[RMDB]
RNA sequence: GGGAACGACUCGAGUAGAGUCGAAAAGGCUAGUUCGCUAGCCAUCACGGGGUCGGUGGGAGGAGCGAUUCAACAGCGUACUGAAGCCUCCACGGUACGACAUGAUUCGCUCCGUUGAUCACCGACGGAGGCACCCUACCUUCGCAUUCGUGCGAAACAAUCAGCAUGCGUUCGCGCAUGCUGAUUGAAAAGAAACAACAACAACAAC
Reactivity to 2A3 in 0.01 (KOAc 150mM, MgCl2 10mM, bicine 150mM(pH8.5), 24C), signal-to-noise 2, nucleotides 027 to 156: g020g000c000u000a020g040u070u100c290g030c080u000a010g050c000c000a020u080c030a020c090g030g010g010g010u020c000g000g010u000g000g000g000a040g000g000a000g000c000g030a000u000u050c040a050a060c040a170g120c000g000u010a000c000u030g090a130a040g050c000c010u070c020c010a000c000g000g000u010a020c010g090a220c150a100u100g000a010u020u040c010g010c000u000c070c000g000u070u000g020a010u010c000a000c010c000g000a000c000g010g010a000g000g030c000a070c000c000c000u080a100c020c030u030u060c000g000c020a020u070u170c190g090u100g030c020g040a060a000a000

Overview:
Source: RMDB library RNAMAK, as collected in RNAgym. Structure probing data (2A3) for a 207-nucleotide construct. 2A3 adducts were read by reverse transcription with SuperScript II with manganese. High 2A3 reactivity points to a flexible backbone, as in loops and unpaired stretches. For 2A3, 1,581 sequencing reads were counted.